Notes
The data come from the RNA Mapping Database (RMDB), library OK1LIB. Structure probing data (2A3) for a 177-nucleotide construct. For 2A3 the reverse transcriptase was SuperScript II with manganese. The RNA was probed in 150 mM KOAc, 10 mM MgCl2 and 150 mM bicine (pH 8.5) at 24 C.
RNA sequence: GGGAACGACUCGAGUAGAGUCGAAAAGAAUUGGUAUGUAAGCUACGGCUUCCGGUAGCUGCGUCACACUUUAAGAGUGUGCAUACUGAGCCGAAGCUCAGCUUCGGUCCCCCAAGGGAAGUUCAAAGAGCCAUGGACGAUUCGUCGUCCAUGGCUCAAAAGAAACAACAACAACAAC
Reactivity to 2A3 in 0.01 (KOAc 150mM, MgCl2 10mM, bicine 150mM(pH8.5), 24C), signal-to-noise 1, nucleotides 027 to 126: g060a000a130u030u000g000g000u030a000u000g000u000a010a010g000c000u000a000c050g050g050c050u000u000c030c000g000g010u000a000g010c000u000g000c000g000u000c030a000c000a000c000u000u040u300a140a050g100a000g270u010g000u000g000c000a000u000a000c000u030g030a000g040c000c000g000a000a000g000c070u240c300a070g000c000u020u000c000g000g030u000c010c000c000c000c000a000a000g020g000g000a000a030g000u040u020c070a110a140a000